[RMDB]
RNA sequence: GGGAACGACUCGAGUAGAGUCGAAAAAUGAAUGCACUGAGGUUCAGAAUGCAAUCCAGGCAAUUCAGAGAGGCGAUAUCAGUGCAGUCAUCUACACAGUUAAUGGUAGACAGAGUAUUGAACUCGCCCUAACGCUCCUUUUCGAAGGAGCGUUAGGAAAAGAAACAACAACAACAAC
Reactivity to 2A3 in 0.01 (KOAc 150mM, MgCl2 10mM, bicine 150mM(pH8.5), 24C), signal-to-noise 6, nucleotides 027 to 126: a020u070g000a000a000u010g000c040a020c120u030g010a090g090g000u120u050c020a060g100a100a090u080g030c040a000a090u120c050c020a030g080g040c020a090a290u030u020c010a010g110a010g030a020g230g000c050g020a020u000a020u140c000a010g000u000g000c000a000g020u020c010a030u000c030u020a010c300a000c010a060g080u210u300a180a060u170g020g010u000a000g000a060c060a000g020a000g020u060a110u130u200g020a050a030c010u000c010g010c000
Reactivity to DMS in 0.01 (KOAc 150mM, MgCl2 10mM, bicine 150mM(pH8.5), 24C), signal-to-noise 3, nucleotides 027 to 126: a100u030g000a030a060u000g000c010a050c000u000g000a050g010g030u000u000c030a110g030a060a040u010g000c100a110a030u050c160c070a000g010g000c020a060a100u000u010c040a050g030a090g010a100g030g000c030g040a070u010a180u020c010a040g010u030g010c010a030g000u000c020a150u000c010u000a000c010a060c110a010g010u010u100a120a190u000g010g030u000a030g010a100c070a300g000a040g000u010a070u000u000g000a040a050c050u010c000g060c260